[RMDB]
RNA sequence: GGGAACGACUCGAGUAGAGUCGAAAAAUGUAUGAUCUCUUUUGGUGUGUGUGUUGAUAGAUUACUAAGUGGUAAUCUCAAUUUAAGAGAUUUAUCAAAUCCAGUACCAAAUAACUCACCUGAAUCGCAGUCCAAUACGAUUCGUCGUAUUGGACUGAAAAGAAACAACAACAACAAC
Reactivity to 2A3 in 0.01 (KOAc 150mM, MgCl2 10mM, bicine 150mM(pH8.5), 24C), signal-to-noise 2, nucleotides 027 to 126: a010u080g030u050a050u080g060a050u030c000u040c000u030u020u040u110g010g000u030g000u000g020u000g010u000g020u030u010g040a090u060a190g000a020u030u000a010c000u050a240a210g110u130g170g000u040a020a020u000c000u010c000a030a030u000u130u190a040a000g000a010g010a000u030u120u150a070u030c020a010a050a030u030c020c010a020g050u050a100c020c030a070a090a060u090a040a050c030u030c010a020c010c020u040g060a090a040u100c090g000
Reactivity to DMS in 0.01 (KOAc 150mM, MgCl2 10mM, bicine 150mM(pH8.5), 24C), signal-to-noise 3, nucleotides 027 to 126: a090u010g010u010a100u010g000a020u000c030u010c000u000u000u020u010g010g010u010g020u020g010u000g020u010g010u000u000g010a090u020a070g000a050u000u000a020c020u000a150a160g030u010g020g010u000a010a010u000c000u000c020a020a040u000u000u010a060a030g010a010g000a000u000u000u000a060u010c070a040a050a070u010c050c040a110g010u010a120c120c070a060a040a060u020a050a080c020u000c010a040c030c020u000g010a060a090u000c180g000